An RNA of 207 nucleotides, treated with 2A3 and DMS and read out base by base. The DMS profile rests on 6,109 reads. The reactions ran in a buffer of 150 mM KOAc, 10 mM MgCl2 and 150 mM bicine (pH 8.5), at 24 C. It was measured as part of the RMDB library OK3TST.
[RMDB]
RNA sequence: GGGAACGACUCGAGUAGAGUCGAAAAGACGUGGAGGUUACGCGCCCUCCUUUGCGCGUAAGUACGUCGAAAUUCGGUGCUUUGGAUCGCACCGUUUGAUCCAUUUGAUAUCCGCUUUGUGCCGCGGUUGGGCAUUUACACUUACCCGAAAGGGGAAAUCGGCAUAUAUGUUCGCAUAUAUGCCGAUAAAAGAAACAACAACAACAAC
Reactivity to 2A3 in 0.01 (KOAc 150mM, MgCl2 10mM, bicine 150mM(pH8.5), 24C), signal-to-noise 4, nucleotides 027 to 156: g000a000c010g030u050g060g160a130g060g130u020u020a000c010g000c000g020c060c010c020u280c020c030u160u050u130g000c000g000c000g000u000a010a000g120u020a010c010g000u010c030g000a060a040a000u060u010c010g000g000u000g030c000u150u130u210g090g080a070u120c020g000c010a020c020c000g000u000u000u050g010a010u020c010c010a020u080u050u160g130a090u090a050u130c030c020g010c070u080u090u140g080u060g040c020c000g070c060g020g050u080u000g070g010g000c010a030u070u020u150a060c070a020c040u100u140a080c010c000c000g070a070a020a010g000g010g000g010a020a150
Reactivity to DMS in 0.01 (KOAc 150mM, MgCl2 10mM, bicine 150mM(pH8.5), 24C), signal-to-noise 2, nucleotides 027 to 156: g020a040c040g000u010g020g010a080g000g000u000u010a040c010g000c000g020c040c140c060u000c110c080u050u010u020g010c000g030c010g010u000a020a090g020u010a030c010g010u010c030g010a040a070a080u010u010c010g030g020u000g020c030u020u000u010g000g010a110u010c250g020c010a120c020c070g010u050u000u000g010a120u000c020c030a150u000u000u000g040a170u000a100u010c000c010g020c080u000u000u000g000u010g020c040c030g010c030g030g010u010u000g010g010g030c040a070u020u010u010a060c100a090c100u000u000a200c010c010c010g000a050a110a170g030g010g020g000a010a090